[RMDB]
RNA sequence: GGGAACGACUCGAGUAGAGUCGAAAACUAUCUAGUUUUCUAGAUAGAGCAUGCUUUUGCAUGCGAACCUGCGUAUGACACAUCCAGCUUUUUUUGCUCGCAGGGGCUCAUCCGAGAAAGGACUUUUGUCCGAUCGGAUGUGUCAGGGAUGGUCAGAAUACUGACCCGAUUUCGAUCGGGUCAGUAUAAAAGAAACAACAACAACAAC
Reactivity to 2A3 in 0.01 (KOAc 150mM, MgCl2 10mM, bicine 150mM(pH8.5), 24C), signal-to-noise 2, nucleotides 027 to 156: c000u000a000u010c000u010a030g120u150u100u260u260c000u000a000g000a000u000a000g020a010g000c000a000u000g000c010u060u100u280u300g000c010a000u010g000c000g010a030a050c000c000u000g020c020g030u100a110u120g010a020c030a000c000a090u000c000c000a020g020c060u030u070u070u110u090u200u290g000c000u000c000g030c000a010g040g000g000g000c000u000c000a000u000c000c000g000a000g040a050a110a090g030g000a010c050u220u270u170u300g030u020c000c000g020a010u000c010g010g000a000u000g000u000g010u000c000a020g000g020g010a010u010g000g010u000c000a010g090a030
Background:
Source: RMDB library OK3TST, as collected in RNAgym. Chemical mapping of a 207-nucleotide RNA with 2A3. For 2A3 the reverse transcriptase was SuperScript II with manganese. Reactivities are rounded to 0.1 and cut off at 0 and 3. Reactivities are given for positions 27 through 156. The 2A3 profile rests on 862 reads.